[RMDB]
RNA sequence: GGGAACGACUCGAGUAGAGUCGAAAAGAUAUGGAUCGGUCGGGAGAAGCCCUAUCGGAAACGAUAGGUCUUCAUCGAUCGAGCCGAUCCUAAGUCAAACUCGAUGCAUCUUCGGAUGCAUCGAGAAGGCCUUAUUAUAGUUCGCUAUAAUAAGGCCAAAAGAAACAACAACAACAAC
Reactivity to 2A3 in 0.01 (KOAc 150mM, MgCl2 10mM, bicine 150mM(pH8.5), 24C), signal-to-noise 2, nucleotides 027 to 126: g000a000u010a010u070g000g010a010u000c000g000g030u010c010g000g010g000a070g000a010a010g010c010c000c000u000a000u000c000g000g000a010a010a000c000g010a000u010a010g000g020u000c010u000u000c000a010u140c020g000a000u010c000g000a010g030c010c000g000a000u010c000c000u000a020a000g020u010c040a090a070a120c010u000c000g000a000u000g000c010a010u000c010u090u110c300g120g010a000u000g010c000a000u000c000g000a000g000a000a020
Reactivity to DMS in 0.01 (KOAc 150mM, MgCl2 10mM, bicine 150mM(pH8.5), 24C), signal-to-noise 4, nucleotides 027 to 126: g000a020u000a030u010g000g000a010u010c000g000g010u000c000g000g000g010a020g020a020a000g000c300c000c000u000a000u000c000g010g000a010a000a030c000g000a010u000a000g000g000u000c000u000u000c010a280u000c180g000a010u010c000g000a030g010c000c000g000a010u000c000c000u000a010a110g010u000c000a110a120a190c000u000c000g000a010u000g000c000a000u000c000u000u010c220g020g010a010u000g000c000a000u000c000g000a000g000a050a060